RNA sequence: GGGAACGACUCGAGUAGAGUCGAAAAAAAAGAUAUGGACAUGAACUACGGUGUAAUACGUGCCGAAGAACUAUGCUCGGAAACGAGCAUAGGGAGGCACGUUUAAGCCGCAUGUCCUAAGUCAAAACUGUACAUAUGGGUUCGCCCAUAUGUACAGAAAAGAAACAACAACAACAAC
Reactivity to DMS in 0.01 (KOAc 150mM, MgCl2 10mM, bicine 150mM(pH8.5), 24C), signal-to-noise 2, nucleotides 027 to 126: a110a050a080a070g000a010u000a300u000g010g020a020c010a010u000g020a120a050c130u050a300c020g000g020u000g000u000a150a140u000a000c020g000u000g010c000c010g000a080a140g030a100a160c000u000a000u000g000c000u000c000g000g000a090a040a120c000g030a020g000c000a010u000a000g000g010g010a040g000g020c010a000c000g000u000u000u000a120a300g000c000c000g010c010a020u000g010u000c000c000u000a020a060g010u000c000a050a060a100a180
Reactivity to 2A3 in 0.01 (KOAc 150mM, MgCl2 10mM, bicine 150mM(pH8.5), 24C), signal-to-noise 2, nucleotides 027 to 126: a000a010a010a040g040a000u060a010u080g020g000a010c020a020u010g010a120a060c120u150a060c300g000g000u090g000u120a070a070u090a090c000g000u010g000c000c000g300a300a010g010a010a000c000u000a010u010g000c010u020c000g000g010a060a090a060c010g010a010g000c010a000u000a000g000g020g000a030g000g000c000a000c000g000u000u000u000a000a000g030c030c000g020c000a000u000g000u010c000c010u000a120a000g040u010c030a030a000a070a160